Description: The record gives the reactivity of an RNA of 207 nucleotides to DMS and 2A3. For 2A3, 2,985 sequencing reads were counted. 2A3 adducts were read by reverse transcription with SuperScript II with manganese. DMS adducts were read by reverse transcription with MarathonRT. Source: RMDB library OK3TST, as collected in RNAgym. The RNA was probed in 150 mM KOAc, 10 mM MgCl2 and 150 mM bicine (pH 8.5) at 24 C.
RNA sequence: GGGAACGACUCGAGUAGAGUCGAAAAAUUAGAAUGUCAUUUACAACAGUAUUAGAAAACAUAGAAUACUGUGGAAUUUAGUGAGCAAAACAUGUGCAAGAUCUGUGUACUCAAAACUACAAAAUGUUGGUAAGAUACAUUAAAUAAGACCUAAAUACUGAACUAGUUAGUUCGCUAACUAGUUCAGAAAAGAAACAACAACAACAAC
Reactivity to DMS in 0.01 (KOAc 150mM, MgCl2 10mM, bicine 150mM(pH8.5), 24C), signal-to-noise 2, nucleotides 027 to 156: a090u010u000a090g000a080a070u000g020u000c030a090u000u000u000a140c020a170a060c000a010g000u000a010u010u000a160g010a170a160a110a160c090a130u000a230g000a050a070u000a030c020u000g020u000g010g010a130a060u000u000u000a060g030u010g000a020g020c070a040a040a110a090c030a060u010g030u010g000c050a070a070g010a070u000c040u000g010u000g040u000a030c070u000c060a030a040a060a160c030u000a160c070a040a040a090a050u000g010u010u010g000g000u000a060a120g040a170u000a060c020a040u000u030a030a040a110u000a040a100g000a110c030c010u010a010a000a060u000a120
Reactivity to 2A3 in 0.01 (KOAc 150mM, MgCl2 10mM, bicine 150mM(pH8.5), 24C), signal-to-noise 3, nucleotides 027 to 156: a000u050u030a020g050a070a060u070g010u050c020a020u070u080u120a080c040a090a010c000a010g020u010a030u030u060a050g150a050a180a030a010c050a020u140a050g100a100a010u030a040c010u000g010u020g040g000a010a000u060u040u020a020g020u030g040a020g070c050a030a070a100a050c090a050u100g030u100g050c040a050a000g000a140u040c040u080g030u020g020u080a020c020u020c050a020a070a080a060c020u050a020c070a050a200a050a080u090g000u060u050g050g040u120a040a000g040a030u100a070c010a030u070u070a060a100a050u070a070a050g040a020c020c030u090a070a010a160u190a090